An RNA of 177 nucleotides, treated with DMS and 2A3 and read out base by base. For DMS, 10,579 sequencing reads were counted. The 2A3 profile rests on 11,383 reads. Source: RMDB library M2PK50, as collected in RNAgym. The reactions ran in a buffer of 150 mM KOAc, 10 mM MgCl2 and 150 mM bicine (pH 8.5), at 24 C. Reactivities are given for positions 27 through 126.

RNA sequence: GGGAACGACUCGAGUAGAGUCGAAAACAACACGUCUUCGGACGUGUUGAAACCUGGUGCGUACGAUAACGCAUAUAAAGCCCAAGACAAGCAGGGCAAAAAAAACAACCAGCUUCGGCUGGUUGAACAAUUUAGUUAUGUUCGCAUAACUAAAUUGAAAAGAAACAACAACAACAAC
Reactivity to DMS in 0.01 (KOAc 150mM, MgCl2 10mM, bicine 150mM(pH8.5), 24C), signal-to-noise 7, nucleotides 027 to 126: c000a010a010c000a000c000g010u000c000u000u010c190g020g010a010c000g020u000g000u000u000g000a050a060a140c020c010u000g030g030u000g000c000g010u000a060c190g020a160u010a100a030c000g010c000a020u000a080u010a070a120a130g000c010c000c000a110a130g020a280c190a050a110g020c210a100g000g000g020c040a000a000a010a050a030a040a060a090c000a010a010c000c000a000g010c000u000u010c180g020g000c000u000g000g010u000u010g000a040a130
Reactivity to 2A3 in 0.01 (KOAc 150mM, MgCl2 10mM, bicine 150mM(pH8.5), 24C), signal-to-noise 3, nucleotides 027 to 126: c000a000a000c000a010c000g010u010c010u050u050c140g130g000a000c000g000u000g000u000u000g000a010a000a010c000c000u020g080g030u020g020c010g010u030a080c080g050a110u100a300a040c000g030c030a000u040a010u020a050a070a010g000c020c000c000a060a050g150a150c070a090a020g100c060a110g010g000g000c000a000a000a000a050a010a030a020a000c000a010a000c010c000a000g010c000u020u050c080g130g010c000u000g000g000u000u000g000a010a010